[RMDB]
RNA sequence: GGGAACGACUCGAGUAGAGUCGAAAAAAGUUACAUAUGGUACUGCGCAUUGGUUGUUUGCGACCCUUGUCUCAACCUAUGUGAUAAUCUUACAAGCCACUAAAUUUACUUUGUGGAACUACUUGUUAACCAACGUGGUUCGCCACGUUGAAAAGAAACAACAACAACAAC
Reactivity to 2A3 in 0.01 (KOAc 150mM, MgCl2 10mM, bicine 150mM(pH8.5), 24C), signal-to-noise 9, nucleotides 027 to 129: a000a020g030u020u010a000c000a010u050a040u270g010g000u050a040c040u040g010c010g000c040a000u000u020g020g020u020u010g090u200u210u270g140c070g000a010c010c010c000u020u040g070u030c040u000c060a100a220c000c000u000a010u000g010u010g000a020u030a140a040u010c020u010u030a000c000a000a000g020c000c000a010c040u190a010a040a120u240u290u100a160c160u060u060u060g000u010g000g020a020a020c010u060a030c000u070u000g010u030u080a040a020c040
Reactivity to DMS in 0.01 (KOAc 150mM, MgCl2 10mM, bicine 150mM(pH8.5), 24C), signal-to-noise 8, nucleotides 027 to 129: a100a060g040u030u010a000c020a020u030a030u060g000g030u000a070c190u000g000c300g000c040a060u000u000g000g000u000u000g040u040u080u060g030c000g020a020c030c020c020u000u000g020u030c050u030c090a090a080c020c010u000a020u000g020u010g000a030u000a070a080u040c090u000u000a020c020a020a030g010c050c000a040c020u040a020a040a120u060u060u050a090c180u000u000u000g000u000g000g000a010a030c020u000a210c000u020u010g000u020u050a060a080c180
Chemical mapping of a 170-nucleotide RNA with 2A3 and DMS. Source: RMDB library 15KLIB, as collected in RNAgym. Reactivities are given for positions 27 through 129. Reactivities are rounded to 0.1 and cut off at 0 and 3. Conditions: 150 mM KOAc, 10 mM MgCl2 and 150 mM bicine (pH 8.5), 24 C.